[RMDB]
RNA sequence: GGGAACGACUCGAGUAGAGUCGAAAACUGAGACUUUACGUGCCACUGAAGAGGCGUCUAAGCAGUCUUAUGCUAUUGCCACCAUCAAAGAAAUUGUUGGUGAGCGCCAACUAUUACUUGUGUGGGAGAAGCGGCAGGUUCGCCUGCCGCAAAAGAAACAACAACAACAAC
Reactivity to DMS in 0.01 (KOAc 150mM, MgCl2 10mM, bicine 150mM(pH8.5), 24C), signal-to-noise 4, nucleotides 027 to 129: c120u080g030a030g000a020c030u020u030u010a020c180g020u070g070c040c050a070c120u060g040a130a070g030a070g020g050c030g000u000c090u020a080a110g000c100a020g040u040c140u050u030a150u050g010c090u070a040u080u070g050c060c070a120c010c060a040u070c000a060a020a110g020a020a000a000u000u070g010u000u000g050g000u010g020a140g020c250g050c030c020a080a040c000u070a050u000u130a040c010u020u050g010u090g020u000g010g090g010a030g080a000a000
Reactivity to 2A3 in 0.01 (KOAc 150mM, MgCl2 10mM, bicine 150mM(pH8.5), 24C), signal-to-noise 5, nucleotides 027 to 129: c010u020g040a010g010a040c000u020u030u050a050c100g020u080g030c020c030a150c050u120g110a140a010g100a090g100g000c020g030u060c020u020a030a030g010c020a020g020u010c000u080u160a150u090g050c000u060a110u140u150g040c000c000a050c020c020a060u110c040a010a060a090g040a020a120a050u050u020g000u000u020g020g010u060g100a110g000c140g000c030c000a020a020c010u070a040u080u050a050c000u040u010g030u010g030u010g110g020g000a100g010a050a030
Structure probing data (DMS and 2A3) for a 170-nucleotide construct.
The reactions ran in a buffer of 150 mM KOAc, 10 mM MgCl2 and 150 mM bicine (pH 8.5), at 24 C.
2A3 adducts were read by reverse transcription with SuperScript II with manganese.
The data come from the RNA Mapping Database (RMDB), library 15KLIB.
For 2A3, 6,086 sequencing reads were counted.